[RMDB]
RNA sequence: GGGAACGACUCGAGUAGAGUCGAAAAGAUAUGGACCCUGUAGCGAGCUAGUGUACUCGGAAACGAGUAUUAGCGAUGAGCUACUGGGUCCUAAGUCAAAAGCUGGUCAACUUCGGUUGACCAGCAACUUCAAGAAAAGGUUCGCCUUUUCUUGAAGAAAAGAAACAACAACAACAAC
Reactivity to 2A3 in 0.01 (KOAc 150mM, MgCl2 10mM, bicine 150mM(pH8.5), 24C), signal-to-noise 3, nucleotides 027 to 126: g000a000u010a010u040g000g000a010c000c010c000u020g010u000a010g010c050g060a020g030c020u010a020g080u120g130u240a040c000u000c000g010g000a000a000a010c000g000a000g010u000a010u010u000a000g000c010g050a280u300g040a010g010c000u010a000c000u000g000g010g010u000c000c000u000a000a000g000u000c000a000a000a040a170g010c010u000g020g000u000c000a010a010c020u070u060c260g200g000u010u010g000a000c000c000a000g000c000a000a000
Reactivity to DMS in 0.01 (KOAc 150mM, MgCl2 10mM, bicine 150mM(pH8.5), 24C), signal-to-noise 4, nucleotides 027 to 126: g000a010u000a010u020g000g000a020c000c000c000u000g020u000a000g020c000g010a040g030c000u000a020g020u010g030u000a030c000u000c000g020g000a000a010a020c000g010a030g000u000a010u010u000a010g020c010g010a220u020g000a090g010c000u000a000c000u000g000g000g000u000c000c000u000a000a060g000u000c010a140a090a120a160g010c000u000g000g000u000c000a010a000c000u000u020c280g040g010u010u000g000a010c000c000a010g000c000a010a030